Structure probing data (2A3 and DMS) for a 177-nucleotide construct. For 2A3, 5,231 sequencing reads were counted.
[RMDB]
RNA sequence: GGGAACGACUCGAGUAGAGUCGAAAAGUGCGACAUUUCGAUGUCGCACAAACCCAAAUCGUGGCACCUAACUAAACAAGCCGGGAAAAGCCAGAUGCCAACGUCCUUAGCCCUUCGGGGCUAAGAAUAGUCUUUACCUUUUCGAAGGUAAAGACUAAAAAGAAACAACAACAACAAC
Reactivity to 2A3 in 0.01 (KOAc 150mM, MgCl2 10mM, bicine 150mM(pH8.5), 24C), signal-to-noise 4, nucleotides 027 to 126: g010u000g000c010g010a000c010a000u050u050u090c200g140a010u010g010u000c000g000c000a000c000a000a000a000c010c000c000a030a100a010u170c100g030u040g010g000c020a050c020c000u060a100a080c020u110a210a130a140c060a120a040g050c050c030g000g010g010a080a230a030a010g040c010c020a010g010a030u050g030c030c010a060a030c040g060u050c010c000u000u020a000g010c000c000c000u020u060c210g040g000g010g000c000u000a000a000g000a000a010
Reactivity to DMS in 0.01 (KOAc 150mM, MgCl2 10mM, bicine 150mM(pH8.5), 24C), signal-to-noise 4, nucleotides 027 to 126: g010u000g000c000g000a010c000a000u000u000u010c180g020a010u000g010u000c000g000c000a000c000a010a120a100c000c000c010a080a080a070u000c050g030u000g010g020c010a040c020c020u000a080a090c060u000a070a090a150c100a090a070g010c080c060g000g010g000a040a090a130a060g010c010c040a040g010a040u000g010c040c040a040a060c110g010u010c100c000u000u010a010g000c000c000c000u000u000c150g050g010g000g010c000u000a000a000g010a080a110

Source: RMDB library M2PK50, as collected in RNAgym. The DMS profile rests on 4,537 reads. DMS adducts were read by reverse transcription with MarathonRT. The RNA was probed in 150 mM KOAc, 10 mM MgCl2 and 150 mM bicine (pH 8.5) at 24 C.